[RMDB]
RNA sequence: GGGAACGACUCGAGUAGAGUCGAAAAGAUAUGGAUGCCUUUUGCCGAUAAGAUAUAUUCGGAAACGAAUAUUAUCUUUUGACGGCGGAGGCAUCCUAAGUCAAAGAAGGCCCUUCGGGGCCUUCAACAUUGUAUAAGUGUUCGCACUUAUACAAUGAAAAGAAACAACAACAACAAC
Reactivity to 2A3 in 0.01 (KOAc 150mM, MgCl2 10mM, bicine 150mM(pH8.5), 24C), signal-to-noise 4, nucleotides 027 to 126: g010a000u020a000u050g000g000a000u010g030c000c000u020u030u090u300g010c020c050g180a180u160a300a010g010a000u010a010u010a000u020u000c000g000g020a010a000a000c000g000a010a000u000a010u140u130a010u010c000u040u050u030u210g300a220c080g000g000c000g010g010a000g000g030c000a010u000c000c000u010a000a000g000u010c010a040a030a100g010a010a010g010g000c010c010c030u020u060c270g050g010g030g000c000c000u000u000c000a020a010
Reactivity to DMS in 0.01 (KOAc 150mM, MgCl2 10mM, bicine 150mM(pH8.5), 24C), signal-to-noise 5, nucleotides 027 to 126: g000a010u000a040u010g000g000a010u000g000c000c000u000u000u000u020g100c000c000g010a100u020a020a020g000a020u010a010u000a000u000u000c000g010g010a010a010a040c000g010a020a000u000a000u010u010a000u000c000u000u000u000u010g010a190c130g030g010c000g000g000a000g000g010c000a010u000c000c000u000a000a060g000u000c000a120a160a190g000a020a010g010g010c000c010c000u000u010c230g040g010g020g010c000c000u000u000c000a070a210
This 177-nucleotide RNA was probed chemically with 2A3 and DMS.
For DMS, 12,499 sequencing reads were counted.
For 2A3, 8,385 sequencing reads were counted.
The reactions ran in a buffer of 150 mM KOAc, 10 mM MgCl2 and 150 mM bicine (pH 8.5), at 24 C.